[RMDB]
RNA sequence: GGGAACGACUCGAGUAGAGUCGAAAACGACAGCUUUUCGAAGCUGUCGAUUGGCAAACGCUAGGACCGGCCAGACAAAGGUCCGAUAGCAAAUCGUAACGAAGCUCGCCUGCUUCGGCAGGCGAAAUAUACGAAAGGCUUUCGAGCCUUUCGUAUAAAAAGAAACAACAACAACAAC
Reactivity to DMS in 0.01 (KOAc 150mM, MgCl2 10mM, bicine 150mM(pH8.5), 24C), signal-to-noise 2, nucleotides 027 to 126: c010g010a000c000a020g010c000u010u000u010u020c150g030a000a010g010c000u000g010u000c000g000a030u000u000g000g010c060a070a120a120c180g000c020u000a080g000g020a010c010c000g010g040c040c070a150g020a110c140a060a080a150g020g020u000c000c000g010a110u020a040g040c030a100a130a090u010c130g000u020a080a070c130g030a090a140g000c120u000c000g010c000c000u010g020c000u000u010c190g000g000c000a010g000g000c000g000a000a000a060